This 177-nucleotide RNA was probed chemically with 2A3 and DMS. For DMS, 4,063 sequencing reads were counted. The 2A3 profile rests on 2,668 reads.
RNA sequence: GGGAACGACUCGAGUAGAGUCGAAAAAGGGAGCUUGAAGUGGUUUCCUGGCCCUCGAAAUAAGCAGCAGAGGGGACGAGCGGUAUAGAAUACCGGUCUUGUGAACAUCAGAGGAUGUCAUGCGGCAGUACAGGAAUAUGUUCGCAUAUUCCUGUACAAAAGAAACAACAACAACAAC
Reactivity to 2A3 in 0.01 (KOAc 150mM, MgCl2 10mM, bicine 150mM(pH8.5), 24C), signal-to-noise 3, nucleotides 027 to 126: a000g060g010g000a030g020c050u110u140g140a200a070g150u100g170g000u000u030u000c000c010u000g050g010c010c020c010u000c020g070a080a080a040u210a160a030g070c040a010g000c030a000g020a020g020g010g000g000a000c180g000a020g050c020g000g060u010a070u020a090g300a300a020u010a040c000c000g010g100u040c010u020u070g040u050g040a050a020c000a010u030c020a020g090a090g300g010a020u020g000u030c000a020u070g030c010g010g000c030a010
Reactivity to DMS in 0.01 (KOAc 150mM, MgCl2 10mM, bicine 150mM(pH8.5), 24C), signal-to-noise 5, nucleotides 027 to 126: a040g010g000g000a020g000c020u010u020g010a130a160g030u010g010g000u010u010u000c000c000u000g010g000c030c010c000u020c110g000a070a090a070u010a090a070g010c060a050g010c060a080g010a080g010g000g010g000a070c070g000a040g010c020g000g000u010a020u000a080g000a070a300u000a020c000c010g010g010u010c010u000u000g010u000g000a090a040c040a010u000c040a200g020a140g010g000a040u000g010u010c030a120u000g000c020g000g010c100a120